[RMDB]
The record gives the reactivity of an RNA of 177 nucleotides to 2A3 and DMS. For DMS, 2,367 sequencing reads were counted. Source: RMDB library OK2TST, as collected in RNAgym. DMS adducts were read by reverse transcription with MarathonRT. In probing experiments dimethyl sulfate is read out at A N1 and C N3, which are open when not base-paired. The 2A3 profile rests on 2,990 reads. The RNA was probed in 150 mM KOAc, 10 mM MgCl2 and 150 mM bicine (pH 8.5) at 24 C.

RNA sequence: GGGAACGACUCGAGUAGAGUCGAAAAUCAGCAAUGGUACGCGCAUAGGCGUAGGCAGCGUCGAAGUUUGCUCCCUCUAAGACAACUUCCGCACCAUAAGAUUGUGUCUUACGGAUCUUGGUGAGGGCGUCCGUAUUGGAUUCGUCCAAUACGGACGAAAAGAAACAACAACAACAAC
Reactivity to 2A3 in 0.01 (KOAc 150mM, MgCl2 10mM, bicine 150mM(pH8.5), 24C), signal-to-noise 3, nucleotides 027 to 126: u120c020a000g080c040a000a070u110g030g050u170a020c020g030c020g040c090a090u110a150g190g000c040g060u030a040g120g070c060a030g020c020g050u080c020g050a050a050g050u050u160u120g000c040u050c000c000c010u010c020u050a080a100g090a080c030a040a060c050u110u030c010c010g000c010a020c010c020a070u100a200a030g030a030u040u100g040u030g040u130c050u100u130a030c060g080g000a020u020c010u030u030g000g020u030g010a030g010g010g010
Reactivity to DMS in 0.01 (KOAc 150mM, MgCl2 10mM, bicine 150mM(pH8.5), 24C), signal-to-noise 3, nucleotides 027 to 126: u010c110a070g030c070a090a060u000g010g020u010a080c160g010c040g040c100a080u000a080g010g010c060g000u010a050g000g030c080a120g030c060g000u000c030g000a100a140g010u000u000u010g030c030u000c010c000c010u000c090u000a070a090g020a050c070a060a030c070u000u010c020c020g000c110a060c020c010a100u010a090a060g000a060u000u000g000u010g010u010c110u010u010a040c050g000g010a050u000c020u010u000g010g010u000g010a020g000g000g010